[RMDB]
RNA sequence: GGGAACGACUCGAGUAGAGUCGAAAAACGGUCGUACGCGACCGAGGCGCGGCUAGGUCGACGGACCGAACAAUGGCAUCCCGCAUUCUGCCAUCCGACGCGCAGCUUCUUCUCAAACGGUGCGGAAAAAAGUAGGACACCUUCGGGUGUCCUACAAGUUAAUCAGGUCCUUCGGGACCUGAUUAACAAAAGAAACAACAACAACAAC
Reactivity to 2A3 in 0.01 (KOAc 150mM, MgCl2 10mM, bicine 150mM(pH8.5), 24C), signal-to-noise 1, nucleotides 027 to 156: a000c020g000g000u000c000g050u070a030c260g000c000g110a000c010c000g000a050g000g000c000g000c010g000g030c000u020a000g000g000u010c030g100a210c130g240g010a010c000c000g000a010a010c020a010a010u000g000g000c020a030u090c090c000c030g000c000a060u300u190c050u050g000c000c000a010u000c000c010g010a000c020g010c030g000c010a040g020c010u120u130c020u080u060c040u050c020a080a120a040c090g050g000u010g010c010g000g000a070a050a050a010a000a000g000u000a000g000g000a000c000a000c010c030u010u080c180g060g000g000u000g000u000c000c000u000a000c000a000a000
This 207-nucleotide RNA was probed chemically with 2A3. Conditions: 150 mM KOAc, 10 mM MgCl2 and 150 mM bicine (pH 8.5), 24 C. Source: RMDB library M2RFPK, as collected in RNAgym. 2A3 adducts were read by reverse transcription with SuperScript II with manganese.